[RMDB]
RNA sequence: GGGAACGACUCGAGUAGAGUCGAAAAGAUAUGGACCGUUGGACAUGCUCAAGAAGGGUCGGAAACGACCCGUAAGAGCAACAGCCACCGGUCCUAAGUCAAAGAGUUUACGUUCGCGUAAACUCAAGCAUGGAGAUGGGUUCGCCCAUCUCCAUGCAAAAGAAACAACAACAACAAC
Reactivity to DMS in 0.01 (KOAc 150mM, MgCl2 10mM, bicine 150mM(pH8.5), 24C), signal-to-noise 1, nucleotides 027 to 126: g000a020u010a300u010g010g000a000c020c000g030u010u000g000g000a070c120a120u000g040c000u020c000a000a060g020a180a170g010g000g020u010c000g020g010a120a080a300c010g010a010c000c000c000g010u000a060a210g000a030g040c000a000a030c290a070g000c040c000a020c000c000g010g000u000c000c010u000a000a040g010u000c040a060a100a060g000a000g000u010u000u000a010c000g020u010u130c210g010c000g070u000a000a010a000c000u000c000a030a070